[RMDB]
RNA sequence: GGGAACGACUCGAGUAGAGUCGAAAAAGUGAGCACGGUACGCCGUGCUCACAGUCAACUACUCACCCCUAAAGGGAUGAGCUUGUAAAAGCGCUUGUUGACCAGACCACUAACUGAGGAUUAGAAAUGUUAGUAAACGAUAAUUUAGAUGUAGAAACCUUGGAAUGCCGCCUCAGUUCCAAGCUCUUUCGUGGCACUGUAAACAGUCCUAUUGAGUUAGGGGCAGUCAACCACGUUGCGAAGCUAAAUUAUCUGGUCGAGAGGAAACAGCUUCUUUCGAGAAGCUGAAAAGAAACAACAACAACAAC
Reactivity to DMS in 0.01 (KOAc 150mM, MgCl2 10mM, bicine 150mM(pH8.5), 24C), signal-to-noise 2, nucleotides 027 to 266: a100g000u000g010a030g000c020a030c000g010g030u010a180c120g010c010c000g020u010g000c030u000c000a000c000a050g000u000c050a070a040c010u010a100c280u010c000a140c030c000c000c010u040a110a160a300g030g000g000a050u000g010a060g020c060u030u000g000u040a070a070a120a020g000c160g010c290u020u030g020u000u000g020a120c000c190a130g010a050c020c000a010c020u020a020a000c000u000g030a170g020g020a180u020u000a090g010a100a160a110u010g020u010u000a010g010u010a030a020a080c050g000a010u000a000a000u020u010u000a000g010a050u000g010u000a050g000a090a030a030c220c010u000u000g000g020a020a010u000g000c230c110g000c000c000u000c010a180g010u010u000c000c020a000a000g010c020u000c030u000u000u000c000g030u000g000g050c100a000c000u000g010u000a090a090a140c180a080g000u010c000c000u000a020u000u000g020a190g000u010u000a000g010g000g000g000c030a020g000u010c040a060a120c040c010a010c060g000u010u000g030c090g000a040a130g020c000u000a000a010a020u000u000a050u000c040u010g000g020u000c010g000a200g010a030g000g030a140a170a200